[RMDB]
RNA sequence: GGGAACGACUCGAGUAGAGUCGAAAAGAAAAAGCGUACUUGUCGCGUAACAAGCAAAUAAAAAGACUAGGAUUGUCGUAAAUCCCAAAUAAAAAGCCUAGAUGUGGCGUAACAUCGAAAUAAGAAAGGGUAACAAUAACUUCGGUUAUUGUUACCCAAAAGAAACAACAACAACAAC
Reactivity to 2A3 in 0.01 (KOAc 150mM, MgCl2 10mM, bicine 150mM(pH8.5), 24C), signal-to-noise 3, nucleotides 027 to 126: g130a000a030a010a050a000g020c030g010u020a040c040u050u000g030u030c010g000c060g080u140a040a020c050a100a030g140c070a110a050a000u300a050a140a010a010a000g020a000c020u020a000g150g000a170u030u200g100u070c070g020u040a000a190a040u000c020c000c020a100a000a000u260a100a060a020a070a040g020c060c080u050a020g020a020u020g050u080g030g020c060g050u050a000a000c000a010u030c030g080a010a050a060u180a190a040g160a080a010a010
Reactivity to DMS in 0.01 (KOAc 150mM, MgCl2 10mM, bicine 150mM(pH8.5), 24C), signal-to-noise 2, nucleotides 027 to 126: g010a070a020a080a090a030g020c080g000u000a130c080u020u010g000u020c000g040c040g020u010a070a060c040a050a160g050c080a070a060a140u070a080a010a080a100a070g000a140c090u040a000g000g000a140u010u000g020u000c000g000u030a080a060a010u020c000c000c060a050a020a130u080a030a040a030a090a100g030c020c010u020a110g000a040u000g000u010g000g000c000g010u020a040a000c020a000u000c000g030a090a070a070u100a080a150g020a070a070a090